[RMDB]
RNA sequence: GGGAACGACUCGAGUAGAGUCGAAAAGAGGGAGCCUGAGAAACGGCUACCAGGUCUAAGGACAGCAGCAGGCGCGAAACUUGCCCAAUUGGAGAGAGGCAGUUAUGAGACGUAUAUUUUGUAACCGUUCAAACCCAGGUUUCGACCUGGGUUUGAAAAAAGAAACAACAACAACAAC
Reactivity to DMS in 0.01 (KOAc 150mM, MgCl2 10mM, bicine 150mM(pH8.5), 24C), signal-to-noise 2, nucleotides 027 to 126: g000a140g000g030g040a080g020c020c000u020g000a190g000a140a090a290c110g000g030c030u000a000c010c020a100g000g010u000c050u010a190a120g010g010a070c020a040g000c100a040g020c000a040g000g030c020g010c080g000a120a070a050c070u020u020g060c000c000c080a060a130u030u040g000g000a030g000a180g010a080g000g000c040a020g000u000u010a000u000g000a030g000a040c170g000u040a100u010a030u000u000u000u000g000u000a080a070c040c090g000
Reactivity to 2A3 in 0.01 (KOAc 150mM, MgCl2 10mM, bicine 150mM(pH8.5), 24C), signal-to-noise 1, nucleotides 027 to 126: g010a040g000g100g060a000g010c020c000u000g080a010g000a000a170a000c140g000g090c030u010a130c000c010a090g000g000u150c020u040a000a020g060g000a000c020a120g050c010a000g040c020a040g060g130c000g000c000g000a000a010a010c070u140u170g000c000c000c080a040a160u070u090g040g010a100g020a000g010a040g030g000c010a020g000u040u030a300u150g000a030g000a000c010g070u150a110u040a000u050u030u020u000g110u040a030a000c030c020g000

The record gives the reactivity of an RNA of 177 nucleotides to DMS and 2A3. The RNA was probed in 150 mM KOAc, 10 mM MgCl2 and 150 mM bicine (pH 8.5) at 24 C.